[RMDB]
RNA sequence: GGGAACGACUCGAGUAGAGUCGAAAAAAUGAGGUAGCUGAGCCAUUGAAGCCAGCUUGGAAUGUGGCUCAUGAUCUGAGGAAUCCAAUCAUUCAAUUGGGUGAAAAGCCACCAAAAAGCGCCGCCCACAUUGAAACCAUUUCGAUGGUUUCAAUGUAAAAGAAACAACAACAACAAC
Reactivity to DMS in 0.01 (KOAc 150mM, MgCl2 10mM, bicine 150mM(pH8.5), 24C), signal-to-noise 5, nucleotides 027 to 126: a040a060u020g010a090g000g010u010a060g020c040u000g000a080g020c010c020a070u020u010g010a110a150g000c020c020a080g010c100u020u010g010g010a070a080u020g010u000g000g000c010u000c030a060u020g000a060u020c070u020g010a070g020g000a140a020u010c040c030a040a030u000c100a090u020u020c140a090a070u010u000g000g000g010u000g000a050a050a080a080g000c030c040a040c030c080a010a060a090a130a100g000c130g000c040c050g010c000c010c020
Reactivity to 2A3 in 0.01 (KOAc 150mM, MgCl2 10mM, bicine 150mM(pH8.5), 24C), signal-to-noise 5, nucleotides 027 to 126: a010a000u130g010a030g010g010u060a040g020c020u030g060a010g030c020c020a120u090u190g060a060a020g000c030c010a020g040c040u030u030g040g030a110a050u110g000u020g030g000c010u020c050a030u140g040a080u030c060u080g060a060g040g090a070a020u000c020c000a010a020u040c040a100u170u070c030a070a110u030u040g010g010g010u030g020a010a080a040a020g020c020c010a020c010c000a010a190a010a020a000g040c020g010c010c000g000c010c000c000
Background:
The record gives the reactivity of an RNA of 177 nucleotides to DMS and 2A3. For 2A3 the reverse transcriptase was SuperScript II with manganese. Source: RMDB libraries RFM100 and RFMREP, as collected in RNAgym.